Source: RMDB library OK1LIB, as collected in RNAgym. An RNA of 177 nucleotides, treated with DMS and 2A3 and read out base by base.
[RMDB]
RNA sequence: GGGAACGACUCGAGUAGAGUCGAAAAGAACAGACUGCCGCACUGGCUGCCCUGAUGAGAACACACCCGUGACUAGCGUCGAAACAUCAACAGUGCGGGCUGUUGGUGUCGGGAGCCACUAAAAGAAGGACUAUUAUGAUUUCGAUCAUAAUAGUCCAAAAGAAACAACAACAACAAC
Reactivity to DMS in 0.01 (KOAc 150mM, MgCl2 10mM, bicine 150mM(pH8.5), 24C), signal-to-noise 5, nucleotides 027 to 126: g000a130a110c100a090g010a090c070u010g000c020c010g000c030a070c060u000g000g000c020u010g000c020c020c030u000g000a050u020g000a130g000a060a080c090a080c140a080c110c030c000g010u020g000a050c050u030a140g010c100g010u000c030g010a110a070a040c030a010u000c010a020a030c030a010g020u000g000c130g010g000g000c020u000g000u000u000g000g000u000g000u000c040g000g020g000a110g010c030c050a070c090u010a060a050a090a090g000a160a130
Reactivity to 2A3 in 0.01 (KOAc 150mM, MgCl2 10mM, bicine 150mM(pH8.5), 24C), signal-to-noise 7, nucleotides 027 to 126: g040a050a000c010a020g110a040c030u070g060c040c020g050c020a030c050u040g020g010c040u070g050c010c000c000u090g040a110u060g030a030g070a040a000c040a000c010a030c030c010c010g030u040g040a120c100u090a020g040c010g070u050c030g100a100a100a040c010a020u060c010a010a040c000a030g020u050g130c030g010g070g000c010u020g000u020u010g000g010u020g060u060c050g000g030g000a010g020c010c000a060c050u150a090a060a030a020g140a090a030
The reactions ran in a buffer of 150 mM KOAc, 10 mM MgCl2 and 150 mM bicine (pH 8.5), at 24 C. The 2A3 profile rests on 10,520 reads. DMS adducts were read by reverse transcription with MarathonRT.